[RMDB]
RNA sequence: GGGAACGACUCGAGUAGAGUCGAAAAGAUAUGGAGGUCAGUAGUCGCACAGUUUCUUCGGAAACGAGAAACUGUGAACUACGACGAAUGACCUCCUAAGUCAAAGAUCACGCUUCGGCGUGAUCAACCUAGGUGAAUAGUUCGCUAUUCACCUAGGAAAAGAAACAACAACAACAAC
Reactivity to 2A3 in 0.01 (KOAc 150mM, MgCl2 10mM, bicine 150mM(pH8.5), 24C), signal-to-noise 5, nucleotides 027 to 126: g040a000u070a040u160g000g000a000g020g000u000c010a010g020u090a010g010u110c000g020c030a000c000a010g000u010u020u010c090u250u240c020g050g020a120a090a070c020g010a000g000a010a000a000c010u000g000u000g000a000a000c000u110a040c020g000a000c010g020a140a200u010g000a000c000c000u000c000c000u000a000a000g000u000c010a000a030a070g010a000u000c000a010c000g000c010u050u160c300g150g010c010g000u000g000a000u000c000a000a000
Reactivity to DMS in 0.01 (KOAc 150mM, MgCl2 10mM, bicine 150mM(pH8.5), 24C), signal-to-noise 5, nucleotides 027 to 126: g000a030u000a300u000g000g000a010g000g000u000c000a040g010u000a280g020u000c030g000c010a000c010a020g010u000u000u000c000u000u010c010g000g000a090a070a200c020g000a020g010a010a000a010c000u000g020u000g000a030a040c150u010a300c030g020a020c010g000a110a280u010g010a010c000c010u000c000c000u000a010a050g000u000c040a090a110a110g000a000u000c000a000c010g010c000u000u010c220g020g000c010g020u000g000a000u000c000a030a050

Structure probing data (2A3 and DMS) for a 177-nucleotide construct. For DMS, 5,995 sequencing reads were counted. For DMS the reverse transcriptase was MarathonRT. It was measured as part of the RMDB library TTRDEL.